[RMDB]
This 177-nucleotide RNA was probed chemically with DMS. Source: RMDB library M2PK50, as collected in RNAgym. The RNA was probed in 150 mM KOAc, 10 mM MgCl2 and 150 mM bicine (pH 8.5) at 24 C.
RNA sequence: GGGAACGACUCGAGUAGAGUCGAAAAUCCGCAGCAUUCGUGCUGCGGAACUUACCGAGGUUGUUGCUCGGUAUAACAACAAAACCCUUGCAAACAAGGGAAACAAUGAGCUAUUCGUAGCUCAUAAUAGCAUUCUUAUCUUCGGAUAAGAAUGCUAAAAAGAAACAACAACAACAAC
Reactivity to DMS in 0.01 (KOAc 150mM, MgCl2 10mM, bicine 150mM(pH8.5), 24C), signal-to-noise 2, nucleotides 027 to 126: u000c000c000g010c000a000g040c000a010u000u000c300g020u000g010c000u000g000c000g000g000a010a030c070u000u000a010c030c020g000a050g010g010u000u010g000u000u000g000c010u010c000g000g000u000a000u010a050a040c200a090a120c240a090a070a130a110c000c010c000u000u030g010c300a080a090a220c020a000a000g000g020g000a070a040a060c090a040a010u000g000a000g000c010u000a020u020u000c160g040u000a010g010c000u000c000a000u020a020a100

Reactivities are given for positions 27 through 126.